[RMDB]
RNA sequence: GGGAACGACUCGAGUAGAGUCGAAAAUACAGGUUCGCCUGUAGCGAAAGCGUACUACCACCAUGGGCGAUGAAAUGAGCUACCCACCUCUUCCCAAAUAGGAAGAGAGGCUCAUGGAGCCUGGGUGGUAUCGCGGACUGACCGGUUCGCCGGUCAAACUUUUAGCACACUUCGGUGUGCUAAAAGUAAAAGAAACAACAACAACAAC
Reactivity to 2A3 in 0.01 (KOAc 150mM, MgCl2 10mM, bicine 150mM(pH8.5), 24C), signal-to-noise 3, nucleotides 027 to 156: u070a000c010a000g000g100u060u110c210g190c090c000u030g010u030a060g050c070g110a140a000a040g010c000g010u120a100c030u010a000c010c020a000c030c010a300u240g010g000g000c070g150a300u060g020a020a020a000u000g010a010g030c020u070a180c070c030c000a070c030c000u000c000u000u010c000c010c010a170a300a100u260a060g000g000a000a000g000a000g010a000g020g000c000u000c000a010u000g000g020a010g000c010c000u010g020g020g010u000g010g000u000a020u130c000g000c000g000g020a030c020u070g000a000c010c000g010g050u050u060c260g090c130c000g000g000u000c000a010a010
Reactivity to DMS in 0.01 (KOAc 150mM, MgCl2 10mM, bicine 150mM(pH8.5), 24C), signal-to-noise 2, nucleotides 027 to 156: u000a040c020a010g000g040u010u000c290g010c030c030u000g060u020a050g020c070g010a090a070a160g010c020g040u010a130c130u000a040c000c000a040c000c020a140u000g060g030g020c000g020a100u030g000a150a070a050u010g000a080g000c010u000a020c050c030c020a300c180c000u000c000u000u030c000c000c020a040a210a200u010a020g020g000a010a000g000a010g000a080g010g000c000u000c020a000u010g000g020a190g010c010c020u000g000g040g020u010g000g050u000a000u010c010g020c020g000g030a090c210u000g020a020c000c000g020g010u000u020c300g020c020c020g000g000u000c000a000a100

Structure probing data (2A3 and DMS) for a 207-nucleotide construct. Conditions: 150 mM KOAc, 10 mM MgCl2 and 150 mM bicine (pH 8.5), 24 C. For DMS, 2,406 sequencing reads were counted. Source: RMDB library RNAMAK, as collected in RNAgym. High 2A3 reactivity points to a flexible backbone, as in loops and unpaired stretches. In probing experiments dimethyl sulfate is read out at A N1 and C N3, which are open when not base-paired. The 2A3 profile rests on 1,739 reads. DMS adducts were read by reverse transcription with MarathonRT.